[RMDB]
RNA sequence: GGGAACGACUCGAGUAGAGUCGAAAACACGAAAGUUGGCUAAUCCUGGUCGGACAUCAGGUGGUUAGUGCAUUGGCAUAAGCCAUCUUGGCGCUAAUAGAUACUAAUCGUAGCAUAGCUGAAUAAAAUUAGUCCCAUGGUUCGCCAUGGGACUAAUAAAAGAAACAACAACAACAAC
Reactivity to DMS in 0.01 (KOAc 150mM, MgCl2 10mM, bicine 150mM(pH8.5), 24C), signal-to-noise 2, nucleotides 027 to 126: c040a120c060g000a070a120a020g000u000u060g020g000c010u020a130a170u080c030c010u000g000g000u010c180g010g010a240c100a030u010c050a020g000g000u050g000g000u000u010a030g000u000g000c040a180u030u030g020g000c000a150u000a130a210g000c090c000a040u020c100u020u020g010g050c050g000c000u020a040a080u030a110g000a030u000a010c020u070a000a050u000c010g070u000a020g010c100a030u000a030g000c000u000g020a010a110u010a050a100a020
Reactivity to 2A3 in 0.01 (KOAc 150mM, MgCl2 10mM, bicine 150mM(pH8.5), 24C), signal-to-noise 2, nucleotides 027 to 126: c090a010c000g180a100a100a080g000u140u060g040g000c010u000a030a030u070c000c000u000g000g000u060c110g120g150a070c000a080u010c000a000g010g000u000g000g000u010u020a000g000u000g000c000a010u010u010g000g030c110a030u100a300a100g000c000c060a090u030c180u070u120g030g010c010g000c010u010a020a020u000a130g090a150u020a010c000u030a020a030u020c030g080u090a000g000c000a080u160a000g030c090u070g100a030a000u080a070a100a000
Chemical mapping of a 177-nucleotide RNA with DMS and 2A3. Reactivities are given for positions 27 through 126.